[RMDB]
RNA sequence: GGGAACGACUCGAGUAGAGUCGAAAAGAAAAGAAAACGCAGCCAAGCGCGUGCGGAAGGCUGCGAAGAAGCACGCGCAAACAAAACAAAAGUCGUAAAGGUGGACGCAGGACACCACGGAAAGAAAGCGGAUUAAUAUGUUCGCAUAUUAAUCCGCAAAAGAAACAACAACAACAAC
Reactivity to DMS in 0.01 (KOAc 150mM, MgCl2 10mM, bicine 150mM(pH8.5), 24C), signal-to-noise 1, nucleotides 027 to 126: g010a030a030a080a100g010a100a120a100a230c040g000c000a100g000c000c020a270a220g020c000g070c000g000u000g010c110g000g000a220a000g000g000c000u000g000c020g000a150a000g110a300a210g070c000a000c000g020c020g010c010a060a120a110c150a000a000a130a000c250a130a000a120a080g000u000c010g010u040a120a180a170g000g020u000g000g000a080c030g000c040a070g070g000a060c150a040c060c000a110c100g000g000a040a020a070g000a000a060a020
Reactivity to 2A3 in 0.01 (KOAc 150mM, MgCl2 10mM, bicine 150mM(pH8.5), 24C), signal-to-noise 2, nucleotides 027 to 126: g030a040a050a020a000g120a050a120a000a000c080g000c050a000g010c000c000a100a050g000c010g000c020g000u000g000c000g050g010a030a000g100g000c020u030g000c030g030a040a000g000a000a000g020c000a000c050g000c010g010c020a010a010a000c010a000a000a000a000c050a070a020a030a040g090u070c010g070u140a130a100a120g090g040u000g030g050a080c060g030c120a080g040g030a000c000a000c010c000a010c010g060g140a100a040a060g130a050a070a020